[RMDB]
An RNA of 177 nucleotides, treated with DMS and 2A3 and read out base by base. The data come from the RNA Mapping Database (RMDB), library OK1LIB. High 2A3 reactivity points to a flexible backbone, as in loops and unpaired stretches.

RNA sequence: GGGAACGACUCGAGUAGAGUCGAAAACAGGGCUACCGCUGUGAACCAGGAGUGUUGGGACAGUGUCUUCGAUAGAAGUGUAUUAGGAUAUAACCCUCCUGUUAGAUUUCAAUCAAAGAGAGUGCCAGCACCACCUUUAAUUCGUUAAAGGUGGUGCAAAAGAAACAACAACAACAAC
Reactivity to DMS in 0.01 (KOAc 150mM, MgCl2 10mM, bicine 150mM(pH8.5), 24C), signal-to-noise 2, nucleotides 027 to 126: c060a110g050g000g000c040u000a060c110c040g000c050u000g000u030g000a070a120c070c050a160g000g000a150g010u010g000u020u000g020g010g020a030c070a050g000u050g020u000c020u000u000c060g050a080u030a110g000a020a010g030u020g010u000a020u020u040a020g000g020a050u010a100u040a080a120c200c130c040u020c000c010u020g000u030u000a050g000a040u010u000u000c030a090a030u000c000a090a040a040g000a070g030a090g020u010g000c010c050a230
Reactivity to 2A3 in 0.01 (KOAc 150mM, MgCl2 10mM, bicine 150mM(pH8.5), 24C), signal-to-noise 3, nucleotides 027 to 126: c040a000g040g010g000c020u120a100c010c010g020c000u000g010u020g120a050a060c070c000a020g010g030a100g040u190g030u070u040g030g040g030a060c000a020g030u030g020u120c030u020u000c030g030a000u020a100g050a030a020g010u100g080u090a060u030u090a030g030g000a000u070a000u090a200a060c040c020c010u000c000c000u020g000u000u000a030g000a060u000u070u010c010a030a030u000c020a010a080a000g050a000g020a020g030u090g040c030c000a000